[RMDB]
RNA sequence: GGGAACGACUCGAGUAGAGUCGAAAAUAACUUCAGCUGCAUCAUGAAGAGUAGACAGAGAUUCUGGCGGUUGAGGGUUUCUUCGUAGAGGUUGAUCGAUUCUUAAUGUCCUGUGGAUUUUAAGUUCACCCUUUAUGAUGUUCGCAUCAUAAAGGGUAAAAGAAACAACAACAACAAC
Reactivity to DMS in 0.01 (KOAc 150mM, MgCl2 10mM, bicine 150mM(pH8.5), 24C), signal-to-noise 3, nucleotides 027 to 126: u000a070a140c020u000u000c020a040g010c030u000g020c020a110u000c080a050u000g000a050a050g010a110g030u020a060g010a180c200a110g000a130g000a150u000u010c010u000g000g020c020g020g020u000u010g000a020g000g010g020u000u000u000c030u000u000c080g010u020a060g020a090g000g020u000u010g020a090u020c060g000a080u000u000c030u000u010a040a040u000g010u000c000c000u010g000u010g030g010a050u020u000u000u000a040a060g010u000u010c090
Reactivity to 2A3 in 0.01 (KOAc 150mM, MgCl2 10mM, bicine 150mM(pH8.5), 24C), signal-to-noise 1, nucleotides 027 to 126: u090a040a010c010u010u000c010a000g000c010u030g000c010a110u020c010a060u300g020a050a020g020a020g140u180a010g050a070c100a020g180a010g010a090u170u000c020u030g030g000c030g000g000u050u060g010a040g000g000g020u050u050u040c000u010u080c020g010u060a050g020a060g100g030u020u040g000a020u040c010g010a010u050u080c020u060u050a060a050u030g010u080c010c040u160g040u140g070g000a000u070u010u030u010a050a050g000u080u040c010